[RMDB]
Source information
The record gives the reactivity of an RNA of 177 nucleotides to DMS. For DMS, 642 sequencing reads were counted. Reactivities are given for positions 27 through 126. Conditions: 150 mM KOAc, 10 mM MgCl2 and 150 mM bicine (pH 8.5), 24 C. It was measured as part of the RMDB library OK2TRN. DMS adducts were read by reverse transcription with MarathonRT.

RNA sequence: GGGAACGACUCGAGUAGAGUCGAAAAACUAGUGAUUUGGUUGCACAGAUUAAUAUUUCAGGUAAUGUUCACACCAGCCAUGCACUGUUGAUCUCUUUCUACCAAUGCUUUUGAAAUAUGCUAAAAGCUUUAGGGUGCAGUUCGCUGCACCCUAAAGAAAAGAAACAACAACAACAAC
Reactivity to DMS in 0.01 (KOAc 150mM, MgCl2 10mM, bicine 150mM(pH8.5), 24C), signal-to-noise 1, nucleotides 027 to 126: a080c080u000a070g000u000g000a090u000u010u000g000g030u000u000g030c110a110c180a090g000a140u030u000a080a100u010a010u000u010u000c080a100g010g000u010a030a060u000g000u000u000c160a120c050a110c190c030a010g000c010c030a020u000g000c040a050c040u000g000u010u000g000a050u000c040u010c010u000u000u000c030u000a060c130c100a070a040u000g050c080u020u000u000u010g020a070a120a040u000a060u020g010c100u010a050a050a080a120g010